[RMDB]
RNA sequence: GGGAACGACUCGAGUAGAGUCGAAAAUGUGCCAUGUCAGUCAUGCCAUGCUAGUCCAUGCGCGACCAUGUAGUACUGAUCACUAGUACUAGUACCUCUAGCUCGUACCGGUACGUACAGCGGAUCGACCUGAUGAGAAGUUCGCUUCUCAUCAGGUAAAAGAAACAACAACAACAAC
Reactivity to 2A3 in 0.01 (KOAc 150mM, MgCl2 10mM, bicine 150mM(pH8.5), 24C), signal-to-noise 4, nucleotides 027 to 126: u150g010u050g000c030c010a020u070g040u100c050a010g020u000c010a060u110g040c030c000a010u040g000c060u120a060g030u040c030c000a020u050g020c080g000c030g050a010c010c000a020u060g040u060a020g010u010a030c000u060g020a050u100c060a020c120u040a020g000u000a010c010u010a050g010u020a030c010c030u030c060u100a040g050c030u030c110g010u030a050c020c050g010g030u020a010c000g010u010a010c040a030g040c080g130g000a060u050c050g040
Reactivity to DMS in 0.01 (KOAc 150mM, MgCl2 10mM, bicine 150mM(pH8.5), 24C), signal-to-noise 5, nucleotides 027 to 126: u020g010u010g020c050c010a040u010g000u000c130a100g010u010c040a070u010g010c080c020a020u000g000c050u000a120g000u010c140c030a040u000g000c090g010c030g010a050c030c030a060u000g000u000a050g030u000a030c040u000g000a080u010c110a140c090u010a060g010u000a020c010u000a060g010u000a040c040c040u000c080u000a100g010c130u000c150g010u000a030c070c060g000g000u000a020c040g020u010a030c080a050g030c120g010g000a070u000c060g010